Annotation:
An RNA of 177 nucleotides, treated with 2A3 and DMS and read out base by base. DMS adducts were read by reverse transcription with MarathonRT. Source: RMDB library OK2TST, as collected in RNAgym. The reactions ran in a buffer of 150 mM KOAc, 10 mM MgCl2 and 150 mM bicine (pH 8.5), at 24 C.
RNA sequence: GGGAACGACUCGAGUAGAGUCGAAAACAGCAUCGUUAUGAAGAGCGCCUACCUUGCUGAGGCUCCAGAGACACCAACCCAGACUGAGACUACUACCACCCAGACCACUACAACUCAAACAACCACCCCUUAUAUGCACCUUCGGGUGCAUAUAAGGAAAAGAAACAACAACAACAAC
Reactivity to 2A3 in 0.01 (KOAc 150mM, MgCl2 10mM, bicine 150mM(pH8.5), 24C), signal-to-noise 1, nucleotides 027 to 126: c010a000g050c000a030u060c080g060u090u160a060u280g130a080a050g030a000g110c040g020c000c020u040a010c000c020u000u110g050c020u060g040a040g090g000c000u050c020c010a010g030a000g010a070c030a000c060c020a050a020c000c000c020a020g020a060c010u050g030a000g020a060c040u060a000c000u030a040c080c020a000c010c010c010a030g050a070c040c000a020c010u080a030c030a160a040c020u040c090a090a070a090c080a000a030c000c040a030c000c020
Reactivity to DMS in 0.01 (KOAc 150mM, MgCl2 10mM, bicine 150mM(pH8.5), 24C), signal-to-noise 2, nucleotides 027 to 126: c060a130g000c060a040u000c050g010u000u010a050u020g020a070a100g020a050g010c060g020c040c020u000a090c020c020u010u000g000c020u000g030a130g040g000c010u000c020c020a080g000a090g010a060c050a030c040c020a090a140c020c030c030a090g030a090c080u030g000a120g020a080c020u000a040c060u010a060c020c040a050c020c020c020a050g010a090c040c020a010c070u000a070c080a050a060c070u000c090a060a080a060c040a050a040c050c040a120c160c100
The DMS profile rests on 1,327 reads.